[RMDB]
RNA sequence: GGGAACGACUCGAGUAGAGUCGAAAAGAUAUGGAUCCCUGACUAUGAAGUAUGUAACAAGUACUCGGAAACGAGUACCGCCCAUAUGGAGUAGGGAUCCUAAGUCAAAGCGUAGUUCGCUACGCAAGUUGAAUACAGAGUUCGCUCUGUAUUCAACAAAAGAAACAACAACAACAAC
Reactivity to DMS in 0.01 (KOAc 150mM, MgCl2 10mM, bicine 150mM(pH8.5), 24C), signal-to-noise 8, nucleotides 027 to 126: g010a040u000a300u000g010g000a000u000c000c000c000u000g010a040c040u000a180u000g010a120a160g000u000a010u010g000u010a070a110c200a170a110g000u000a010c000u000c000g010g010a100a090a180c000g010a010g000u000a000c000c040g010c300c140c000a010u000a010u000g000g020a060g020u000a020g000g010g000a010u000c000c000u000a010a060g010u000c040a070a100a110g010c010g020u000a000g010u000u020c230g020c010u000a000c000g020c000a030a070
Reactivity to 2A3 in 0.01 (KOAc 150mM, MgCl2 10mM, bicine 150mM(pH8.5), 24C), signal-to-noise 8, nucleotides 027 to 126: g020a020u070a030u120g000g000a000u000c030c020c000u030g230a050c020u110a290u300g030a060a030g030u020a010u070g070u140a170a090c060a190a060g000u000a000c000u000c010g010g030a070a070a040c010g000a000g000u000a000c000c000g040c000c020c000a030u030a020u060g040g020a030g000u010a000g000g000g000a000u000c000c000u010a090a030g040u030c050a100a080a030g000c000g000u010a010g010u030u140c300g000c130u010a010c000g010c000a000a020
An RNA of 177 nucleotides, treated with DMS and 2A3 and read out base by base.
The RNA was probed in 150 mM KOAc, 10 mM MgCl2 and 150 mM bicine (pH 8.5) at 24 C.
For 2A3 the reverse transcriptase was SuperScript II with manganese.
It was measured as part of the RMDB library TTRDEL.